Annotation
Chemical mapping of a 177-nucleotide RNA with DMS and 2A3. It was measured as part of the RMDB library M2PK50. The DMS profile rests on 1,632 reads. The RNA was probed in 150 mM KOAc, 10 mM MgCl2 and 150 mM bicine (pH 8.5) at 24 C.

[RMDB]
RNA sequence: GGGAACGACUCGAGUAGAGUCGAAAAUUACCUCCCUUCGGGGAGGUAAACUGAACGCUGCAAGCGGCAGCGCGCUCCCUUGCGCACACACGCACAAUAAAAGCAGUAUGCACUUCGGUGCAUACAACACAAGGACACUGUUCGCAGUGUCCUUGUGAAAAGAAACAACAACAACAAC
Reactivity to DMS in 0.01 (KOAc 150mM, MgCl2 10mM, bicine 150mM(pH8.5), 24C), signal-to-noise 2, nucleotides 027 to 126: u000u000a000c020c000u000c000c000c000u010u040c210g030g020g020g020a020g000g020u000a000a000a070c070u010g000a090a130c020g020c000u000g000c020a140a130g030c110g000g000c000a020g000c010g020c040g000c070u000c000c010c020u000u010g000c020g040c020a120c140a060c180a100c050g000c030a050c170a070a060u020a050a080a170a090g000c180a060g000u000a000u000g000c000a010c010u010u040c150g000g010u000g000c000a010u000a000c000a100a090
Reactivity to 2A3 in 0.01 (KOAc 150mM, MgCl2 10mM, bicine 150mM(pH8.5), 24C), signal-to-noise 3, nucleotides 027 to 126: u020u010a000c000c010u000c020c000c020u010u080c230g040g000g000g000a000g000g000u000a000a010a000c010u010g050a100a000c030g000c040u020g000c020a120a230g210c080g180g000c080a010g020c030g020c000g000c020u060c000c000c010u030u050g030c070g000c020a060c000a000c000a010c150g040c030a020c050a090a160u160a110a130a000a000g010c060a020g000u010a000u010g000c000a000c000u010u070c200g050g000u000g000c000a000u000a000c000a000a000